Overview:
Structure probing data (2A3 and DMS) for a 207-nucleotide construct. Source: RMDB library OK3TST, as collected in RNAgym. Reactivities are given for positions 27 through 156. For 2A3, 2,599 sequencing reads were counted.
RNA sequence: GGGAACGACUCGAGUAGAGUCGAAAAACGUAUUGAUGGAGGCUACUCACUCCAUCUUACAAGUAAGUAGCCUUGUAAAGAUCGUAGAUGUUCGAUCUGAUAGUGAACAUCUACACUAUCGUAGAUGACACUGACCAUCUACAAUACGUGUCAGUGACGUUGUAUGCAUGUUCGCAUGCAUACAACGAAAAGAAACAACAACAACAAC
Reactivity to 2A3 in 0.01 (KOAc 150mM, MgCl2 10mM, bicine 150mM(pH8.5), 24C), signal-to-noise 3, nucleotides 027 to 156: a000c020g010u030a020u020u060g050a070u040g030g030a000g010g010c040u040a020c000u010c090a030c000u000c010c010a020u010c010u000u010a030c040a010a010g040u010a080a080g030u060a000g040c010c020u030u060g110u120a080a160a070g030a060u160c080g000u030a020g000a070u060g010u000u020c040g050a120u100c130u180g120a090u100a090g190u100g000a020a010c000a000u010c000u000a000c020a010c000u070a060u110c040g030u020a000g000a020u000g020a030c010a000c040u010g010a010c000c000a010u000c000u040a070c050a030a000u060a030c060g000u040g010u050c000a010g010u000g040a030
Reactivity to DMS in 0.01 (KOAc 150mM, MgCl2 10mM, bicine 150mM(pH8.5), 24C), signal-to-noise 2, nucleotides 027 to 156: a030c020g000u000a020u000u000g010a150u010g010g000a030g000g000c000u000a020c020u010c010a100c000u000c020c030a120u000c160u000u000a090c050a040a030g010u000a050a030g010u000a040g030c050c000u000u000g020u000a080a140a100g000a020u000c090g000u000a090g010a090u020g000u000u000c010g020a060u000c060u020g040a110u000a110g010u010g100a050a070c040a030u000c010u000a030c000a120c070u000a050u000c070g040u000a010g020a040u000g030a250c020a080c080u000g000a120c060c000a030u000c000u000a070c030a030a010u000a010c030g000u000g000u000c040a070g010u000g000a180